[RMDB]
RNA sequence: GGGAACGACUCGAGUAGAGUCGAAAAAUUUUAGGGUCUACUACUGGAGGACUAGUCUUAAGACAGUGGGACAAAAGUUCUUGUGAUUUUCGCCCCUUAAUCAAUAUGCACAUGUUGACUACCAAUGUGUAAGGCAGUCAAGAGAAGCAGAGAAGAAUGCUACGUAGUAGUUCGCUACUACGUAGCAAAAAGAAACAACAACAACAAC
Reactivity to DMS in 0.01 (KOAc 150mM, MgCl2 10mM, bicine 150mM(pH8.5), 24C), signal-to-noise 1, nucleotides 027 to 156: a050u020u000u000u000a050g000g020g020u010c010u010a060c080u010a080c030u030g020g010a120g020g030a120c050u000a180g020u000c030u020u010a040a170g010a050c090a050g020u010g030g010g040a020c020a020a030a020a080g020u000u000c050u000u000g010u000g000a080u000u000u000u000c020g010c030c020c020c020u000u000a070a050u000c080a040a180u000a080u000g030c030a090c130a190u000g010u000u000g020a080c010u000a050c040c030a050a020u020g020u020g020u000a060a180g020g000c000a030g040u000c030a010a100g000a060g000a100a100g000c060a080g000a160g000a070a170g000a140a120
Reactivity to 2A3 in 0.01 (KOAc 150mM, MgCl2 10mM, bicine 150mM(pH8.5), 24C), signal-to-noise 2, nucleotides 027 to 156: a000u190u200u090u130a000g000g040g000u020c070u040a080c020u050a070c030u110g060g020a040g000g000a000c000u010a040g030u000c000u020u170a120a050g040a050c060a070g060u100g010g020g020a010c050a020a270a060a080g000u040u010c000u040u080g120u040g080a140u020u020u040u150c020g010c000c000c000c000u040u150a060a060u100c030a050a070u040a050u230g060c000a080c000a040u050g060u090u000g020a020c000u020a030c020c000a020a100u100g010u010g050u110a080a070g000g000c040a000g000u030c000a000a000g010a000g000a090a020g000c010a000g010a000g000a090a000g070a090a020